[RMDB]
RNA sequence: GGGAACGACUCGAGUAGAGUCGAAAAGGAGCACUGUUACAAGUUGGUUCAGUCGUGUUGCUUGGAGUGUGGCUGAAAAAAUGGGACAAGCAUUAAACUUUAUUAUCACAAAAGGUUCUGAAUGGGUUUCUAACAUUUGGAAUACAGUUACAAGUUACCUAAAUAGGGUCUUCGGACCCUAUUUAGGAAAAGAAACAACAACAACAAC
Reactivity to 2A3 in 0.01 (KOAc 150mM, MgCl2 10mM, bicine 150mM(pH8.5), 24C), signal-to-noise 1, nucleotides 027 to 156: g030g010a020g000c050a020c120u010g000u000u100a080c070a070a040g040u050u040g060g040u040u100c060a040g000u030c020g040u010g010u130u090g050c050u030u060g040g000a080g020u110g050u010g010g000c030u030g000a040a010a000a000a040a070u060g010g000g020a010c020a060a000g000c020a050u100u090a050a000a070c020u010u020u100a070u070u180a050u100c040a010c010a100a030a160a060g050g000u000u000c000u010g020a000a020u020g010g120g000u030u250u110c050u020a060a000c000a020u000u000u030g000g020a020a010u110a040c000a050g070u160u100a050c020a020a030g270u170u160a050